[RMDB]
RNA sequence: GGGAACGACUCGAGUAGAGUCGAAAAGAUGGAGACUUCGGUCUCCAUCAAAACAGGACGUGGAGCCGGCUUCGCGGCGCACGACGAUGACGCCCGGGCGGGAAAUCCUUAGGUUCGCCUAAGGAAACGUAGCAUAAUAGUUCGCUAUUAUGCUACGAAAAGAAACAACAACAACAAC
Reactivity to 2A3 in 0.01 (KOAc 150mM, MgCl2 10mM, bicine 150mM(pH8.5), 24C), signal-to-noise 5, nucleotides 027 to 126: g010a000u000g010g010a000g000a000c010u050u080c290g030g000u000c000u000c000c000a000u000c000a000a000a000a000c020a010g040g090a030c040g070u080g050g060a060g070c020c010g070g040c120u300u280c090g040c100g050g000c000g000c020a020c020g210a040c080g210a280u050g060a080c030g030c000c010c000g020g040g030c050g020g020g020a040a110a040u020c000c000u000u000a010g010g030u020u040c180g070c040c000u000a000a000g000g000a010a010a010
Reactivity to DMS in 0.01 (KOAc 150mM, MgCl2 10mM, bicine 150mM(pH8.5), 24C), signal-to-noise 6, nucleotides 027 to 126: g000a010u000g010g000a020g010a010c000u000u010c200g040g010u000c000u000c000c000a000u000c000a020a040a080a160c090a090g000g010a070c070g020u000g010g000a160g020c000c020g010g000c100u000u000c080g020c120g010g000c020g020c020a040c040g010a100c150g010a110u000g000a150c110g000c030c010c010g000g010g030c040g000g000g000a070a090a100u000c000c010u000u000a010g000g010u000u010c260g010c010c000u000a010a010g000g000a020a040a100